[RMDB]
Conditions: 150 mM KOAc, 10 mM MgCl2 and 150 mM bicine (pH 8.5), 24 C. The record gives the reactivity of an RNA of 177 nucleotides to 2A3 and DMS.
RNA sequence: GGGAACGACUCGAGUAGAGUCGAAAACGCGCUGGGGGUGUACACGGGUUUGCCCCCGUAUCUGUGUAUUAUCUCUUGUUAUAGCGCUGGGAUAGGUGGAGUGGUGGCGGUCUGCGUUUGGCGGGCGGUGUAUUUAUUAUUUCGAUAAUAAAUACACAAAAGAAACAACAACAACAAC
Reactivity to 2A3 in 0.01 (KOAc 150mM, MgCl2 10mM, bicine 150mM(pH8.5), 24C), signal-to-noise 6, nucleotides 027 to 126: c070g020c000g000c030u040g020g000g000g000g000u010g000u010a000c010a000c010g010g000g000u010u020u110g060c000c000c000c000c000g000u000a000u000c000u000g000u000g000u010a010u130u100a030u030c010u000c000u030u060g160u090u150a150u110a080g000c000g000c020u030g030g000g020a060u050a060g000g010u020g010g010a050g020u060g020g000u030g010g000c000g000g020u010c010u030g010c010g030u040u070u120g050g010c020g010g000g000c030g000
Reactivity to DMS in 0.01 (KOAc 150mM, MgCl2 10mM, bicine 150mM(pH8.5), 24C), signal-to-noise 7, nucleotides 027 to 126: c110g010c030g020c020u010g000g010g000g000g030u000g000u010a010c010a020c010g000g000g000u000u010u030g000c030c010c000c010c020g010u020a000u000c010u000g000u000g000u000a010u010u040a020u010c000u000c010u010u020g020u020u040a110u040a050g010c010g030c010u010g010g000g010a100u020a040g000g010u030g000g010a120g020u020g000g010u020g010g010c070g010g000u000c030u000g010c050g010u010u020u020g010g010c060g000g000g020c070g000

The DMS profile rests on 66,037 reads. Values are in units of 0.01, from 0 to 300, in steps of 10.